[RMDB]
RNA sequence: GGGAACGACUCGAGUAGAGUCGAAAACUUGCAAGGUUCGCCUUGCAAGAAAUAAAAGCUCACCAACCAACAUAAAUAAGAGCAUGGAUGGAAAAAGAAUAAAAACAGCAGUGUUCGCACUGCUGAACUAACAACAUUAGUUCGCUAAUGUUGUUAGAAAAGAAACAACAACAACAAC
Reactivity to 2A3 in 0.01 (KOAc 150mM, MgCl2 10mM, bicine 150mM(pH8.5), 24C), signal-to-noise 6, nucleotides 027 to 126: c000u000u000g000c000a010a000g020g010u060u110c170g070c060c000u000u000g000c000a000a000g010a010a020a000u040a000a050a000a000g040c010u030c050a070c010c010a040a050c020c020a030a090c030a080u240a150a290a030u190a150a100g050a020g080c070a040u040g040g020a040u040g000g080a080a070a040a040a020g110a080a080u140a120a110a010a000a000c000a000g000c000a010g020u000g040u080u110c200g020c060a000c000u000g010c000u000g000a000a000
Reactivity to DMS in 0.01 (KOAc 150mM, MgCl2 10mM, bicine 150mM(pH8.5), 24C), signal-to-noise 4, nucleotides 027 to 126: c000u010u010g000c010a010a000g010g020u010u020c230g030c000c010u000u000g000c000a000a000g000a020a070a040u000a080a080a120a110g010c030u010c030a110c070c040a050a090c050c040a070a080c080a080u000a080a070a120u020a090a110g000a090g000c080a040u010g000g010a080u000g000g020a070a050a050a100a080g010a100a090u030a080a060a060a100a130c000a000g000c000a000g010u000g010u000u010c240g020c010a010c000u000g010c000u000g000a020a090